[RMDB]
RNA sequence: GGGAACGACUCGAGUAGAGUCGAAAACACUAUGUUCAACUUCGAUAUCAGAUGGUGCAUUAAGUUGCCUAAGUGCUUCUUGUGCGUUCAUUUCUACCAUAAAACUACUUCCUAAACCGUGGCCACAGACUUAAAUACAAUUCGUUGUAUUUAAGUCAAAAGAAACAACAACAACAAC
Reactivity to DMS in 0.01 (KOAc 150mM, MgCl2 10mM, bicine 150mM(pH8.5), 24C), signal-to-noise 6, nucleotides 027 to 126: c050a110c110u010a030u020g010u020u020c050a050a060c080u000u000c040g010a090u030a070u030c110a090g010a050u010g000g010u020g000c030a020u010u030a050a020g010u000u010g000c060c010u020a060a120g030u030g010c010u010u010c000u000u000g020u010g010c040g020u000u030c030a050u010u000u010c030u000a080c080c040a070u020a040a070a080a080c090u020a060c110u000u000c020c010u000a060a080a080c110c030g030u000g010g010c020c030a060c090a140
Reactivity to 2A3 in 0.01 (KOAc 150mM, MgCl2 10mM, bicine 150mM(pH8.5), 24C), signal-to-noise 9, nucleotides 027 to 126: c060a010c040u120a090u190g060u090u090c060a090a080c040u080u070c060g090a080u060a080u230c060a060g030a120u040g010g030u040g010c010a010u150u190a070a020g030u030u020g010c010c010u190a300a060g040u200g190c000u010u000c000u020u030g010u010g020c020g040u120u130c020a030u040u070u020c030u050a070c010c030a060u130a100a090a030a010c030u080a050c010u050u030c010c010u040a080a060a080c040c020g050u050g040g010c020c010a060c020a040